[RMDB]
RNA sequence: GGGAACGACUCGAGUAGAGUCGAAAAGUGAGCUAGGUGUCAUUGGUCUUAUCUGACCAAUGUCAAAUGUGAAUGGGUGGGGUGCAAGUUCACAGAGUUAGCAAGUGGCAAAGGCAGGCUUUGAGCCCAGGUCUGUCUAAGUUCACAGCCCAUUGUAUGAUAUAAAUCAUUUCGAUGAUUUAUAUCAAAAAGAAACAACAACAACAAC
Reactivity to 2A3 in 0.01 (KOAc 150mM, MgCl2 10mM, bicine 150mM(pH8.5), 24C), signal-to-noise 5, nucleotides 027 to 156: g060u040g020a010g010c040u070a060g010g130u050g020u030c000a010u010u010g000g020u020c020u070u300a290u140c160u130g000a000c000c000a000a000u000g000u000c000a020a040a040u100g020u020g050a070a040u050g020g060g030u100g010g030g020g010u040g010c030a050a050g010u010u010c020a010c020a040g060a020g090u070u080a010g030c050a150a050g020u040g100g000c030a110a040a020g020g000c010a010g000g000c010u060u040u140g080a050g020c020c020c010a020g010g010u010c000u000g000u000c010u010a020a010g000u060u070c020a000c020a030g030c000c000c010a010u020u040g030u030a090
Reactivity to DMS in 0.01 (KOAc 150mM, MgCl2 10mM, bicine 150mM(pH8.5), 24C), signal-to-noise 4, nucleotides 027 to 156: g020u000g010a080g020c010u000a090g020g030u000g020u000c010a020u000u000g010g000u010c000u010u010a150u010c260u020g010a010c000c000a010a020u000g000u000c030a050a070a080u010g020u000g000a090a060u000g010g010g030u000g020g010g030g030u010g000c060a070a130g020u000u000c040a050c030a110g020a170g010u000u010a090g010c030a050a120g020u000g020g020c020a070a120a070g010g020c010a040g010g000c010u000u000u000g010a100g010c040c010c060a120g020g010u000c010u000g020u000c010u000a060a140g000u010u010c010a030c030a120g010c000c010c000a260u010u000g010u010a150